Chemical mapping of a 177-nucleotide RNA with DMS. It was measured as part of the RMDB library OK2TRN. DMS adducts were read by reverse transcription with MarathonRT.
[RMDB]
RNA sequence: GGGAACGACUCGAGUAGAGUCGAAAAAACUGCGGUAAACACCACUAGUCCAAAUUGGUCGUUGUGAAAAGGUUCAGUCCAAGCUAUCGCCUACCGCAUUGAAGCGAUCAGAGCUUACUGGUUGGUAAAGCUCUUCCUUAUUCGUAAGGAAGAGCUUAAAAGAAACAACAACAACAAC
Reactivity to DMS in 0.01 (KOAc 150mM, MgCl2 10mM, bicine 150mM(pH8.5), 24C), signal-to-noise 3, nucleotides 027 to 126: a080a100c090u020g000c030g010g020u010a110a070a070c090a070c070c020a030c090u000a050g010u010c070c040a050a080a130u010u000g000g000u000c050g010u000u000g020u000g010a050a040a080a090g000g000u000u010c120a070g010u000c030c050a040a110g000c050u000a060u010c110g000c020c030u000a030c040c010g000c030a040u000u000g010a110a080g020c040g010a030u000c110a090g020a090g020c080u000u000a070c050u000g010g000u000u000g000g000u010a070